[RMDB]
RNA sequence: GGGAACGACUCGAGUAGAGUCGAAAACGAGUUAGUUCAAGCUCUUACAUCCAAAAUGCGGCUGGAUUGUCAAACGGUUGGGGACAUGACAUGGAGGCAUUUGUCAGAAAUGCUAUUUGCCUCCUGGAACUCCGUGAAAGAAGUAUCCCUCAAAGCGUGUAUUUCUGAUAUUCGUAUCAGAAAUACAAAAAGAAACAACAACAACAAC
Reactivity to 2A3 in 0.01 (KOAc 150mM, MgCl2 10mM, bicine 150mM(pH8.5), 24C), signal-to-noise 5, nucleotides 027 to 156: c040g010a020g010u060u100a040g030u110u110c080a100a030g020c010u010c000u080u100a050c040a070u050c030c020a040a040a050a120u130g010c040g030g020c040u030g010g040a080u060u080g040u110c050a100a040a050c040g020g020u060u080g040g020g000g020a020c020a060u090g040a030c030a090u130g000g000a000g000g000c010a010u010u010u030g080u070c000a000g040a060a090a030u040g000c000u030a020u010u010u010g000c000c000u000c000c000u000g010g010a020a020c000u000c020c020g020u080g050a070a040a030g040a030a010g030u050a080u040c000c030c000u060c070a080a100a020g080c070g020
Reactivity to DMS in 0.01 (KOAc 150mM, MgCl2 10mM, bicine 150mM(pH8.5), 24C), signal-to-noise 4, nucleotides 027 to 156: c070g010a090g020u000u000a090g030u000u010c060a140a170g030c020u000c020u000u000a090c050a110u000c020c100a060a060a090a090u000g000c110g010g030c040u000g020g000a090u000u000g010u000c020a070a120a110c040g000g010u000u000g030g020g000g000a100c030a080u000g000a140c050a080u000g000g020a040g020g030c010a020u000u000u000g020u000c050a060g020a110a080a160u010g010c030u000a070u000u000u000g010c010c000u000c000c010u010g010g010a080a080c020u000c010c010g000u000g010a070a060a120g020a060a100g020u000a140u000c010c000c000u010c050a060a070a120g020c070g030

Background
Conditions: 150 mM KOAc, 10 mM MgCl2 and 150 mM bicine (pH 8.5), 24 C. Chemical mapping of a 207-nucleotide RNA with 2A3 and DMS. For 2A3 the reverse transcriptase was SuperScript II with manganese. 2A3 is a SHAPE reagent: it acylates the 2'-hydroxyl of flexible nucleotides of all four kinds.